[RMDB]
RNA sequence: GGGAACGACUCGAGUAGAGUCGAAAAGAUAUGGAUACCCUUACCACCAACAGCUCGGAAACGAGACAUGGUGAAGGAGUAUCCUAAGUCAAACACUGACAAUUACCUUCGGGUAAUUGUCAGUGAACAUACCAUGCGGGUUCGCCCGCAUGGUAUGAAAAGAAACAACAACAACAAC
Reactivity to DMS in 0.01 (KOAc 150mM, MgCl2 10mM, bicine 150mM(pH8.5), 24C), signal-to-noise 3, nucleotides 027 to 126: g000a030u000a300u010g000g000a020u000a010c000c000c000u000u000a150c300c000a010c020c000a030a110c240a150g000c000u000c000g000g020a050a050a140c000g000a000g020a040c100a160u000g000g010u000g000a050a020g000g010a080g010u000a000u000c020c000u010a010a060g000u000c010a110a070a180c000a010c000u000g000a030c000a000a000u000u000a010c000c020u000u000c200g020g000g030u000a000a000u010u000g000u010c000a010g010u000g000a050a120
Reactivity to 2A3 in 0.01 (KOAc 150mM, MgCl2 10mM, bicine 150mM(pH8.5), 24C), signal-to-noise 2, nucleotides 027 to 126: g020a020u050a020u150g000g000a020u000a020c000c000c000u020u050a220c150c020a010c010c020a070a120c050a210g000c000u000c010g100g000a100a090a060c020g020a020g060a040c070a100u120g000g000u020g010a000a000g030g010a140g010u000a000u040c000c000u010a100a010g060u020c040a040a120a000c000a000c000u000g000a000c000a000a010u000u000a020c010c000u020u080c300g120g000g000u000a000a000u000u010g020u000c000a000g010u000g000a000a000
Conditions: 150 mM KOAc, 10 mM MgCl2 and 150 mM bicine (pH 8.5), 24 C. Chemical mapping of a 177-nucleotide RNA with DMS and 2A3. The DMS profile rests on 2,358 reads.